[RMDB]
RNA sequence: GGGAACGACUCGAGUAGAGUCGAAAAUUACCUCCCUUCGGGGAGGUAAACUGAACGCUGCAAGCGGCAGCGCGCUCGCUUGCGCACACACGCACAAUAUAAGCAGUAUGCACUUCGGUGCAUACAACGUUAUUCAUGAGUUCGCUCAUGAAUAACGAAAAGAAACAACAACAACAAC
Reactivity to 2A3 in 0.01 (KOAc 150mM, MgCl2 10mM, bicine 150mM(pH8.5), 24C), signal-to-noise 6, nucleotides 027 to 126: u010u000a010c000c000u000c000c000c000u000u050c240g060g000g000g000a000g000g000u000a010a000a010c010u010g050a070a010c090g030c100u200g000c010a010a040g010c010g060g000c010a070g260c070g040c050g010c100u150c050g010c000u010u020g000c000g010c000a010c000a010c000a020c040g080c010a030c050a220a070u130a040u070a280a050g030c040a020g000u000a000u000g000c000a000c000u020u060c210g090g000u000g000c010a000u000a000c000a010a000
Reactivity to DMS in 0.01 (KOAc 150mM, MgCl2 10mM, bicine 150mM(pH8.5), 24C), signal-to-noise 5, nucleotides 027 to 126: u000u000a000c010c000u000c000c000c000u000u020c190g030g020g000g010a010g000g030u010a000a000a070c080u010g020a100a110c210g010c040u000g040c000a040a030g010c010g020g020c040a140g010c140g020c180g020c010u010c050g010c010u000u000g000c010g030c020a070c160a070c090a070c100g010c090a050c160a070a090u000a080u000a110a090g020c150a140g010u000a000u000g000c010a010c000u000u000c140g020g000u000g010c000a000u000a000c000a070a120